[RMDB]
RNA sequence: GGGAACGACUCGAGUAGAGUCGAAAAGACGCCUUUAGAAGAAGAGGCUAGGGGGUAUUCCGGUGUGGGUUACUUAGUAAUAUGCAACGCUAAUUGCAUAAGAUUGUAGGACGGAAUUUACAGUCUUUAGAGAUAAGCACGUUCGCGUGCUUAUCAACACAUACUUCCGCUUCGGCGGAAGUAUGUGAAAAGAAACAACAACAACAAC
Reactivity to 2A3 in 0.01 (KOAc 150mM, MgCl2 10mM, bicine 150mM(pH8.5), 24C), signal-to-noise 1, nucleotides 027 to 156: g090a000c010g030c000c000u140u010u070a300g010a300a000g040a030a020g030a040g000g000c000u010a130g040g000g030g010g000u030a060u220u020c110c000g000g080u050g030u070g010g020g010u060u000a000c000u070u060a050g060u030a050a080u020a050u030g000c010a000a020c050g070c110u200a160a070u130u000g000c000a000u000a000a000g000a020u000u300g030u110a020g070g060a040c040g090g040a060a000u000u160u050a050c000a000g000u000c000u080u160u080a090g030a000g020a030u000a000a000g010c000a000c000g000u050u070c170g000c000g130u020g000c010u000u000a000u000c000a010a000
Structure probing data (2A3) for a 207-nucleotide construct. For 2A3, 460 sequencing reads were counted. For 2A3 the reverse transcriptase was SuperScript II with manganese. The data come from the RNA Mapping Database (RMDB), library M2RFPK. Conditions: 150 mM KOAc, 10 mM MgCl2 and 150 mM bicine (pH 8.5), 24 C. Reactivities are given for positions 27 through 156.